[RMDB]
RNA sequence: GGGAACGACUCGAGUAGAGUCGAAAAUGUCGGCUAUCUCAAGGAACGCAUUAUCGAUCAAUAUGGCGAUGAGUACGAGGGCGUGCCGAUUACUUACACGCACCAGCGCGAGCAGAGGGGACUUGCUCACGCAUUGCUCUCCGUCGAGGAGCACAUCGAGAUAGGGAGGGUUCGCCCUCCCUAUCUCAAAAGAAACAACAACAACAAC
Reactivity to 2A3 in 0.01 (KOAc 150mM, MgCl2 10mM, bicine 150mM(pH8.5), 24C), signal-to-noise 2, nucleotides 027 to 156: u080g020u090c010g010g030c020u030a110u000c040u010c040a060a100g100g000a170a050c070g000c140a010u070u000a070u180c020g040a050u060c040a240a080u160a130u300g030g130c050g020a000u060g000a060g090u070a050c050g020a100g000g060g000c090g040u100g040c040c010g010a000u060u050a000c040u080u180a040c020a000c080g110c010a070c080c000a050g010c000g000c000g010a010g020c000a020g000a100g190g020g020g040a040c000u020u010g010c000u000c000a000c010g000c010a040u040u120g000c030u000c000u000c000c070g100u120c070g060a010g030g020a000g000c000a040c020a060u100c070
The data come from the RNA Mapping Database (RMDB), library OK3TST. Structure probing data (2A3) for a 207-nucleotide construct. Values cover nucleotides 27 to 156. 2A3 is a SHAPE reagent: it acylates the 2'-hydroxyl of flexible nucleotides of all four kinds. The reactions ran in a buffer of 150 mM KOAc, 10 mM MgCl2 and 150 mM bicine (pH 8.5), at 24 C.